[RMDB]
RNA sequence: GGGAACGACUCGAGUAGAGUCGAAAAGCUGGAGUUUGAACUUGAGGGAGAGCAGAAGAAGAACACAGAGUCUGUUAAGGGCCUGAGGAAGUAUGAGCGGAGGGUCAAGGAGCUGACGUACCAGGUAAGUGGAACGCAAACGCCAUGAUCGUGUCCACCCCUGGGAUUUAUUCGUAAAUCCCAGGGGAAAAGAAACAACAACAACAAC
Reactivity to 2A3 in 0.01 (KOAc 150mM, MgCl2 10mM, bicine 150mM(pH8.5), 24C), signal-to-noise 1, nucleotides 027 to 156: g010c030u040g100g000a060g010u160u150u150g140a090a080c000u030u040g020a000g030g000g030a050g030a060g090c040a010g000a120a000g030a000a020g070a040a020c040a000c010a040g000a010g100u000c030u080g050u060u040a000a090g120g000g000c000c030u040g040a070g050g000a070a050g040u110a040u080g020a020g090c020g050g000a020g020g080g020u020c010a030a030g050g000a030g030c030u030g020a080c020g000u000a040c030c030a060g030g040u080a100a050g040u080g000g090a050a000c030g010c140a070a140a000c080g010c050c000a030u030g020a020u120c030g010u010g130u040c000c010a010